[RMDB]
RNA sequence: GGGAACGACUCGAGUAGAGUCGAAAACGCGGCCGCAGCCCGCGUGGACGCUCCGAGCGCCCCCCGACGGACGGGACCGGCUCCCUGGCGGUCGGGCGAGCGGGCGGCAACGCUGCCCGGCCGGCAGUACUAGACUGGGGUUCGCCCCAGUCUAGUAAAAAGAAACAACAACAACAAC
Reactivity to DMS in 0.01 (KOAc 150mM, MgCl2 10mM, bicine 150mM(pH8.5), 24C), signal-to-noise 2, nucleotides 027 to 126: c040g010c020g000g000c040c130g030c210a170g000c160c010c020g020c000g020u010g010g000a290c060g020c030u010c070c080g000a090g000c030g000c000c030c020c020c030c080g000a090c070g000g000a100c060g000g000g000a060c080c050g000g000c040u000c020c040c000u010g000g010c010g010g010u000c020g000g010g030c020g010a050g000c020g000g010g010c050g000g000c080a060a060c040g000c000u000g010c010c020c030g000g010c010c010g000g000c050a010g000